About this RNA:
Structure probing data (2A3 and DMS) for a 177-nucleotide construct.
RNA sequence: GGGAACGACUCGAGUAGAGUCGAAAAAGAUGGUUGGCCGCGCUCACCACGCACAGCACCGCAAGGAGCACAAAGCCCGCAGUGUGCAUCACCGUCAGGAAGGCCGAGCGCAUCAUGUUCGUGAAGGUGAUUAGGGACGGUUCGCCGUCCCUAAUCAAAAAGAAACAACAACAACAAC
Reactivity to 2A3 in 0.01 (KOAc 150mM, MgCl2 10mM, bicine 150mM(pH8.5), 24C), signal-to-noise 2, nucleotides 027 to 126: a000g090a030u150g130g020u160u070g060g020c020c020g000c070g000c010u010c020a060c000c000a050c010g080c000a020c020a100g040c000a000c010c040g010c050a030a210g030g000a020g000c000a050c100a070a140a000g030c000c000c000g000c000a020g080u030g010u090g040c020a000u070c000a000c000c000g140u110c000a020g200g000a160a000g070g000c080c090g020a040g000c010g020c000a010u130c020a020u070g050u120u000c020g110u060g170a010a040g080g000
Reactivity to DMS in 0.01 (KOAc 150mM, MgCl2 10mM, bicine 150mM(pH8.5), 24C), signal-to-noise 1, nucleotides 027 to 126: a150g000a060u020g070g010u010u000g000g030c060c050g050c010g000c000u000c140a270c060c020a100c090g080c010a120c070a110g000c030a120c090c120g030c200a070a100g000g000a070g000c030a060c200a050a000a220g000c030c020c000g000c030a130g060u010g000u000g010c000a220u050c050a090c010c080g000u040c090a090g010g020a000a060g000g000c040c020g000a040g000c050g000c040a010u030c070a130u040g020u000u000c070g000u020g000a080a020g000g010

For 2A3, 657 sequencing reads were counted. 2A3 adducts were read by reverse transcription with SuperScript II with manganese.